[RMDB]
RNA sequence: GGGAACGACUCGAGUAGAGUCGAAAAGCCCUCGGACAUAAGCUCCGCUUCGAGGGCGGGAGGCAUGCGGAGCUUAUGUCGCCUCCCACCGUACGGUGGACAUGCGAAAGCAUGUCCAUCGUACGGAGCAGGAAGUACCCUUCGGGGUACUUCCUGCAAAAGAAACAACAACAACAAC
Reactivity to 2A3 in 0.01 (KOAc 150mM, MgCl2 10mM, bicine 150mM(pH8.5), 24C), signal-to-noise 1, nucleotides 027 to 126: g030c000c010c020u020c050g120g000a030c000a000u000a000a000g000c000u000c000c010g010c020u100u140c050g070a160g030g100g000c100g020g050g010a030g060g100c130a050u090g000c000g000g000a000g000c000u010u000a000u000g000u000c010g050c000c030u060c010c030c000a060c000c010g010u000a000c000g000g000u000g000g000a000c010a000u000g000c000g060a120a020a020g000c000a000u000g000u000c000c000a000u000c000g000u000a000c000g000g000a000